[RMDB]
RNA sequence: GGGAACGACUCGAGUAGAGUCGAAAAGCUACAGUUAGUAAAUUCAACCAAGGAAAAUGUAUUUAUUAACAUGAACUAGCCACCUAAUUAACCCUUACCUUAUUUUUUAUACCCUUGGAUCAUCAAAGGUGAUGCGACCAUUCGUGGUCGCAUCACCAAAAGAAACAACAACAACAAC
Reactivity to 2A3 in 0.01 (KOAc 150mM, MgCl2 10mM, bicine 150mM(pH8.5), 24C), signal-to-noise 1, nucleotides 027 to 126: g000c010u060a010c000a000g000u000u000a000g000u000a000a010a000u140u070c040a040a000c000c010a000a000g070g070a190a300a060a060u010g000u050a000u000u000u000a000u000u000a040a060c150a080u050g130a090a040c090u100a000g100c000c000a080c000c000u000a030a300u050u040a000a060c010c010c010u000u150a080c000c040u130u000a240u150u070u000u000u120u060a190u100a290c010c000c010u000u000g100g000a080u050c010a000u000c050a090a090a090

Conditions: 150 mM KOAc, 10 mM MgCl2 and 150 mM bicine (pH 8.5), 24 C. This 177-nucleotide RNA was probed chemically with 2A3. Values are in units of 0.01, from 0 to 300, in steps of 10. 2A3 adducts were read by reverse transcription with SuperScript II with manganese.